Description:
Structure probing data (2A3 and DMS) for a 170-nucleotide construct. For DMS the reverse transcriptase was MarathonRT. Reactivities are given for positions 27 through 129.

RNA sequence: GGGAACGACUCGAGUAGAGUCGAAAACCAACCCGCGGGCCGGCUACUCUUCUUUCCCUUCUCUCGUCUUCUUCGGUCAACCUCCGAAGUUCCUCUUCCUCUUCCCUGCUGAGGGACUUUCCCCCGGUUCGGUGCGGGUUCGCCCGCACCAAAAGAAACAACAACAACAAC
Reactivity to 2A3 in 0.01 (KOAc 150mM, MgCl2 10mM, bicine 150mM(pH8.5), 24C), signal-to-noise 3, nucleotides 027 to 129: c010c000a000a030c020c020c020g040c020g000g000g000c020c020g030g000c010u070a030c020u060c030u060u030c010u030u050u000c010c000c000u080u040c020u000c010u000c000g050u000c010u150u000c010u030u050c050g030g000u040c040a040a060c020c020u030c020c010g000a010a010g020u030u020c020c000u010c000u010u000c000c010u010c000u040u030c010c000c000u020g020c020u030g040a100g000g000g000a010c000u040u060u050c000c020c000c020c000g010g000u040u050c020
Reactivity to DMS in 0.01 (KOAc 150mM, MgCl2 10mM, bicine 150mM(pH8.5), 24C), signal-to-noise 4, nucleotides 027 to 129: c090c050a140a150c060c030c030g030c030g050g000g040c060c060g060g000c070u030a060c100u010c000u000u060c020u000u000u000c030c010c010u020u020c020u020c010u000c090g030u010c050u030u010c000u030u010c070g020g050u000c100a000a010c120c090u030c030c040g070a080a040g020u030u010c000c000u040c020u000u030c000c010u070c000u060u010c020c010c040u040g030c060u040g010a070g020g030g000a050c070u030u020u040c000c000c000c000c000g000g030u110u000c030
Conditions: 150 mM KOAc, 10 mM MgCl2 and 150 mM bicine (pH 8.5), 24 C. The DMS profile rests on 15,934 reads. For 2A3, 8,287 sequencing reads were counted.